[RMDB]
Source information
The record gives the reactivity of an RNA of 177 nucleotides to 2A3 and DMS. For DMS the reverse transcriptase was MarathonRT. The RNA was probed in 150 mM KOAc, 10 mM MgCl2 and 150 mM bicine (pH 8.5) at 24 C.
RNA sequence: GGGAACGACUCGAGUAGAGUCGAAAAGAUAUGGAAGCUCGCUCUAUGAAGUUAACUACCCACCUCGGAAACGAGAGGUUAAUGGAGAGCGUUCGCUUCCUAAGUCAAAGAUAGGUUCGCCUAUCAACAUUGGAGCCAUGUUCGCAUGGCUCCAAUGAAAAGAAACAACAACAACAAC
Reactivity to 2A3 in 0.01 (KOAc 150mM, MgCl2 10mM, bicine 150mM(pH8.5), 24C), signal-to-noise 1, nucleotides 027 to 126: g010a000u010a020u070g010g000a000a020g020c000u010c000g080c000u000c010u010a300u270g000a000a000g020u000u010a000a000c000u090a140c060c140c100a250c130c010u000c000g000g040a000a040a020c020g020a000g020a050g010g000u020u020a000a000u020g020g010a020g000a010g040c000g000u050u040c150g040c000u020u000c000c010u000a020a010g020u040c040a080a220a020g020a000u000a040g000g050u060u000c300g090c090c040u000a000u010c000a020a090
Reactivity to DMS in 0.01 (KOAc 150mM, MgCl2 10mM, bicine 150mM(pH8.5), 24C), signal-to-noise 2, nucleotides 027 to 126: g010a060u000a100u000g000g000a070a010g000c000u000c000g020c000u010c000u010a280u010g010a080a140g010u000u010a010a000c000u000a110c260c130c190a220c220c010u000c000g040g020a030a030a050c000g000a010g000a100g010g000u000u000a000a000u000g030g010a030g000a000g000c000g020u000u000c250g000c000u000u010c000c000u000a000a070g000u000c000a070a090a130g000a030u020a000g060g020u000u000c230g020c020c000u000a010u000c000a130a160